Structure probing data (DMS) for a 177-nucleotide construct. Values cover nucleotides 27 to 126. The RNA was probed in 150 mM KOAc, 10 mM MgCl2 and 150 mM bicine (pH 8.5) at 24 C. In probing experiments dimethyl sulfate is read out at A N1 and C N3, which are open when not base-paired.

RNA sequence: GGGAACGACUCGAGUAGAGUCGAAAAGGGAUUCUUUAACAUCUCAGUGCUUCAGUGUCUUUGUGUGUCAAAUAGAAGUGAUAUCAGCUUUGAUUUUUGCAGUUCUUGUGAGUAGUAAAUGCAUCCAGAGUUCUUACAACUUCGGUUGUAAGAACUCAAAAGAAACAACAACAACAAC
Reactivity to DMS in 0.01 (KOAc 150mM, MgCl2 10mM, bicine 150mM(pH8.5), 24C), signal-to-noise 1, nucleotides 027 to 126: g000g040g000a080u000u010c110u020u030u000a070a130c150a040u000c020u000c050a130g020u000g030c000u010u000c070a030g060u000g000u000c040u010u000u010g010u010g010u000g000u000c030a040a050a080u000a140g000a110a030g020u000g000a120u020a090u000c080a120g020c030u000u000u000g020a120u000u000u000u000u000g020c070a060g010u000u000c050u020u000g000u000g000a070g000u000a120g020u010a040a030a060u000g020c070a030u020c070c070a170